The record gives the reactivity of an RNA of 177 nucleotides to 2A3 and DMS. Values are in units of 0.01, from 0 to 300, in steps of 10. The 2A3 profile rests on 2,406 reads. It was measured as part of the RMDB library M2PK50.
RNA sequence: GGGAACGACUCGAGUAGAGUCGAAAAGAACUCACCUUCGGGUGAGUUCAAACCCGAUGAAGCGGCACUUAGACAGCUUCUUACACCUAAGAAGUGCAAUAAAAACAACGCGGUUCGCCGCGUUGAAUCCACUGUAUAGGUUCGCCUAUACAGUGGAAAAAGAAACAACAACAACAAC
Reactivity to 2A3 in 0.01 (KOAc 150mM, MgCl2 10mM, bicine 150mM(pH8.5), 24C), signal-to-noise 2, nucleotides 027 to 126: g000a010a000c000u000c000a000c000c000u010u060c180g070g000g000u000g000a000g000u000u000c000a000a000a000c010c010c000g020a130u110g020a050a020g030c040g030g000c020a020c090u020u020a070g050a150c040a020g000c000u010u000c000u010u030a050c080a050c020c070u020a060a050g050a030a020g030u020g030c030a030a070u140a130a090a010a020a020c000a000a010c000g000c020g000g050u020u050c230g020c100c000g000c000g000u000u000g000a010a010
Reactivity to DMS in 0.01 (KOAc 150mM, MgCl2 10mM, bicine 150mM(pH8.5), 24C), signal-to-noise 3, nucleotides 027 to 126: g000a010a010c000u000c000a010c000c010u000u010c250g020g010g040u000g000a010g010u000u000c000a030a120a110c010c000c010g030a080u000g010a060a060g000c030g020g000c060a050c120u000u000a080g010a100c080a130g000c000u000u000c010u000u000a100c080a050c150c090u010a050a050g000a090a110g000u000g000c060a110a110u010a040a020a090a130a180c010a000a000c000g010c000g000g000u010u000c220g030c000c000g000c000g040u000u000g010a070a120